[RMDB]
RNA sequence: GGGAACGACUCGAGUAGAGUCGAAAAGAUAUGGAUCUGUGGAGUUAAGUGCCAUUGGUCGGAAACGACCACUGGCUCAAACUCCCAGAUCCUAAGUCAAAGGCCCAGUUGUUCGCAACUGGGCCAACACCUUCUCAUAGUUCGCUAUGAGAAGGUGAAAAGAAACAACAACAACAAC
Reactivity to 2A3 in 0.01 (KOAc 150mM, MgCl2 10mM, bicine 150mM(pH8.5), 24C), signal-to-noise 4, nucleotides 027 to 126: g000a000u010a010u040g000g000a000u000c000u040g220u300g140g000a010g020u060u170a300a160g130u300g180c010c010a010u010u010g000g000u000c000g000g000a010a020a000c010g000a000c010c000a000c020u000g000g030c010u000c030a040a040a010c000u020c000c000c000a010g000a020u000c000c000u020a010a000g000u000c010a030a130a190g010g000c000c000c020a020g000u020u050g040u050u180c300g010c260a000a000c010u010g000g000g020c000c010a000a000
Reactivity to DMS in 0.01 (KOAc 150mM, MgCl2 10mM, bicine 150mM(pH8.5), 24C), signal-to-noise 2, nucleotides 027 to 126: g010a020u000a050u010g000g000a010u000c000u000g000u020g010g010a030g020u000u000a110a090g010u010g030c000c000a010u010u000g000g000u000c000g030g000a010a010a030c000g010a020c010c000a000c140u000g020g010c000u000c300a050a040a010c010u000c000c000c000a000g000a000u000c010c000u000a000a050g000u000c010a100a140a140g000g010c010c000c000a000g010u000u010g020u010u020c250g040c040a020a010c010u000g000g000g050c000c020a010a040